Background:
Conditions: 150 mM KOAc, 10 mM MgCl2 and 150 mM bicine (pH 8.5), 24 C. This 177-nucleotide RNA was probed chemically with 2A3 and DMS. For 2A3 the reverse transcriptase was SuperScript II with manganese.
RNA sequence: GGGAACGACUCGAGUAGAGUCGAAAAGAUAUGGACACUAUGAGGCUUUUGACGAGUCGUUGUUCGGAAACGAACAACACUCGAUAAGCCUAUAGUGUCCUAAGUCAAACCAGUGUUCGCACUGGAACCAAGAUCAAUCGUUCGCGAUUGAUCUUGGAAAAGAAACAACAACAACAAC
Reactivity to 2A3 in 0.01 (KOAc 150mM, MgCl2 10mM, bicine 150mM(pH8.5), 24C), signal-to-noise 2, nucleotides 027 to 126: g020a000u100a020u170g000g000a000c010a000c020u020a010u150g300a080g090g000c020u110u080u200u300g300a140c020g000a000g010u070c100g000u210u010g010u000u020c000g000g020a080a080a050c000g010a010a000c000a000a000c030a000c000u000c000g010a000u060a030a000g030c010c000u000a000u010a000g000u000g000u010c000c000u000a000a000g010u000c010a000a020a120c000c000a000g000u010g070u080u120c300g040c140a000c020u010g020g060a000a040
Reactivity to DMS in 0.01 (KOAc 150mM, MgCl2 10mM, bicine 150mM(pH8.5), 24C), signal-to-noise 1, nucleotides 027 to 126: g000a030u000a300u010g000g030a010c000a000c000u000a000u000g020a020g030g000c000u040u000u020u000g040a190c170g000a010g010u000c190g000u000u000g030u000u000c000g020g000a090a100a180c000g020a010a010c000a000a010c000a000c000u010c010g000a030u010a020a040g010c000c000u000a020u000a020g000u000g020u010c000c040u000a010a090g010u010c060a140a160a180c020c000a030g010u000g010u000u000c300g040c020a050c000u000g000g010a060a210
For DMS, 1,151 sequencing reads were counted.